[RMDB]
RNA sequence: GGGAACGACUCGAGUAGAGUCGAAAACUUGAUUUGGAUAUCUCGUUCAGUGAGAUGCCUUUUAUUUACAUUGACAGCCUCAAUGAUCACUGUUAUAUUCUUUAAAGAGGUAAAAUUUAUAUCCAUAGAUACUCGCCUGAUUCGUCAGGCGAGUAUCAAAAGAAACAACAACAACAAC
Reactivity to 2A3 in 0.01 (KOAc 150mM, MgCl2 10mM, bicine 150mM(pH8.5), 24C), signal-to-noise 2, nucleotides 027 to 126: c000u100u140g110a130u120u010u110g010g040a030u000a070u040c090u000c110g050u160u090c050a130g020u110g220a090g000a040u150g000c000c000u040u000u000u000a160u010u080u040a060c070a070u000u100g000a000c040a030g080c060c000u080c180a040a080u220g090a040u090c060a030c100u000g010u050u030a150u010a080u210u020c120u070u150u160a130a040a000g090a020g020g020u090a040a040a040a040u090u190u020a040u050a000u000c000c020a000u050a120
Chemical mapping of a 177-nucleotide RNA with 2A3. Source: RMDB library OK1LIB, as collected in RNAgym. The reactions ran in a buffer of 150 mM KOAc, 10 mM MgCl2 and 150 mM bicine (pH 8.5), at 24 C. As a SHAPE reagent, 2A3 marks flexible, mostly unpaired nucleotides at the ribose 2'-OH.